[RMDB]
RNA sequence: GGGAACGACUCGAGUAGAGUCGAAAAGAUAUGGAUCCAGGAGGAUGAACUACUCGGAGGGUCGGAAACGACCUGACGAGCAUCUACCCACCCUGGAUCCUAAGUCAAAGGCCUCUUCGGAGGCCAAGCAUUGUACGUAGUUCGCUACGUACAAUGCAAAAGAAACAACAACAACAAC
Reactivity to DMS in 0.01 (KOAc 150mM, MgCl2 10mM, bicine 150mM(pH8.5), 24C), signal-to-noise 3, nucleotides 027 to 126: g010a040u000a300u000g010g000a010u000c000c000a010g030g020a300g000g010a110u000g000a070a040c110u020a220c020u010c000g000g000a300g000g000g000u000c030g010g000a060a070a290c000g020a010c000c000u010g000a210c020g000a020g000c080a020u000c040u020a230c050c060c050a300c280c000c000u010g000g010a010u000c000c000u000a010a050g000u000c070a040a160a180g010g010c000c000u000c000u000u010c170g050g000a000g010g000c000c000a000a040
Reactivity to 2A3 in 0.01 (KOAc 150mM, MgCl2 10mM, bicine 150mM(pH8.5), 24C), signal-to-noise 2, nucleotides 027 to 126: g010a020u110a070u180g000g010a000u000c000c010a000g040g010a030g000g030a020u080g030a130a160c110u220a060c020u300c030g000g000a030g020g040g010u000c030g030g000a100a140a030c010g010a010c010c000u020g020a020c010g000a010g000c000a010u000c000u050a180c020c020c040a110c040c030c000u000g000g000a010u010c010c000u000a010a000g000u000c050a060a040a160g000g000c020c020u000c000u090u120c300g130g000a000g000g000c030c010a000a000